Notes:
Conditions: 150 mM KOAc, 10 mM MgCl2 and 150 mM bicine (pH 8.5), 24 C. This 177-nucleotide RNA was probed chemically with DMS and 2A3. For DMS the reverse transcriptase was MarathonRT.

[RMDB]
RNA sequence: GGGAACGACUCGAGUAGAGUCGAAAAAAAAGAUAUGGAUCAUGGGCUUCGAAGAACGUAUGGGUAUAACCACUCGGAAACGAGUGGCUAAUACCAUACGGGAGAAGGCCAUGAUCCUAAGUCAAAACUACAACGUUAUGUUCGCAUAACGUUGUAGAAAAGAAACAACAACAACAAC
Reactivity to DMS in 0.01 (KOAc 150mM, MgCl2 10mM, bicine 150mM(pH8.5), 24C), signal-to-noise 2, nucleotides 027 to 126: a060a020a090a130g020a030u000a020u010g000g000a000u010c010a000u000g000g000g010c010u010u000c000g000a120a140g000a120a190c010g000u000a000u020g000g010g000u000a060u010a160a130c010c000a000c000u000c000g020g000a010a010a020c000g020a000g020u000g000g000c010u010a060a080u010a070c000c010a020u000a000c000g000g010g000a000g010a010a000g000g000c000c000a000u000g010a000u000c000c000u000a000a050g000u000c000a090a070a100a170
Reactivity to 2A3 in 0.01 (KOAc 150mM, MgCl2 10mM, bicine 150mM(pH8.5), 24C), signal-to-noise 1, nucleotides 027 to 126: a000a000a000a000g020a000u030a010u020g000g000a000u000c010a030u010g090g060g000c010u040u010c030g300a300a030g000a000a020c010g000u000a010u000g120g000g000u300a020u020a050a000c000c000a000c000u020c010g020g000a020a010a000c000g000a000g010u010g030g000c000u000a010a010u100a050c010c010a000u000a000c000g020g000g010a000g000a000a020g010g010c020c010a000u000g000a000u020c000c000u000a000a000g000u010c000a000a030a090a110
Overview: For 2A3 the reverse transcriptase was SuperScript II with manganese.